RNA sequence: GGGAACGACUCGAGUAGAGUCGAAAAACCUUCCUUGUCUUGGGGAGCAGAAAUGUCCAAUGAACGUCUAGUGAGGGCAUUGCUGCUGACACCAAAGAUAUUACCCCCGCUCACUGGUCGCCUGCGAUUCCCUUUCUAUUUUCGAAUAGAAAGGGAAAAAAGAAACAACAACAACAAC
Reactivity to 2A3 in 0.01 (KOAc 150mM, MgCl2 10mM, bicine 150mM(pH8.5), 24C), signal-to-noise 9, nucleotides 027 to 126: a010c020c000u050u050c010c010u050u050g010u020c010u000u020g010g010g010g010a000g000c010a000g020a010a010a000u010g000u000c000c000a060a150u200g080a170a050c060g100u110c210u270a090g030u050g090a080g000g000g000c000a000u010u020g020c000u000g000c010u010g010a020c000a050c010c000a030a050a010g030a000u020a050u030u170a160c010c010c000c010c010g000c010u020c010a040c030u050g030g010u050c010g010c010c000u030g000c010g050a060
Reactivity to DMS in 0.01 (KOAc 150mM, MgCl2 10mM, bicine 150mM(pH8.5), 24C), signal-to-noise 9, nucleotides 027 to 126: a080c080c070u000u000c010c010u000u010g010u000c010u000u000g000g010g000g000a050g000c000a010g010a020a010a010u000g010u000c000c000a150a190u030g020a150a060c040g000u030c180u060a120g010u000g010a180g010g000g000c000a000u000u000g000c010u000g000c000u010g010a150c060a180c010c010a020a030a040g010a020u000a030u020u030a300c060c020c010c010c020g010c060u000c040a050c050u010g000g010u000c020g010c010c010u000g000c080g000a170